[RMDB]
RNA sequence: GGGAACGACUCGAGUAGAGUCGAAAAGAUAUGGAAGACAGCGACGAUCAUGUGGAUCGGAAACGAUCCCAUGGGAGCUGUAUUCCUAAGUCAAACAUGAUCCAUCAGUUCGCUGAUGGAUCAUGAACGGAGAUACCAUCUUCGGAUGGUAUCUCCGAAAAGAAACAACAACAACAAC
Reactivity to 2A3 in 0.01 (KOAc 150mM, MgCl2 10mM, bicine 150mM(pH8.5), 24C), signal-to-noise 1, nucleotides 027 to 126: g070a020u100a020u160g000g040a020a060g030a000c000a020g000c010g260a300c020g020a300u040c030a000u000g240u300g020g000a000u020c040g000g000a040a050a000c020g000a010u010c000c000c020a010u000g000g000g000a000g000c010u020g000u000a010u000u000c010c000u020a090a030g070u020c060a030a040a070c020a000u010g000a030u010c000c000a020u030c010a000g070u030u190c240g010c170u000g000a000u000g020g000a010u000c000a000u000g010a020a010
Reactivity to DMS in 0.01 (KOAc 150mM, MgCl2 10mM, bicine 150mM(pH8.5), 24C), signal-to-noise 1, nucleotides 027 to 126: g020a070u000a300u000g020g000a010a000g000a010c020a000g000c000g000a030c260g000a020u030c000a000u000g010u010g050g000a000u000c000g000g020a040a090a180c010g000a000u010c000c000c000a000u000g040g010g030a050g000c000u000g020u000a000u000u000c010c010u000a020a110g010u010c050a120a080a270c000a030u000g000a000u000c000c000a000u000c000a000g010u000u040c260g020c000u000g000a000u000g000g000a000u000c000a000u000g000a060a160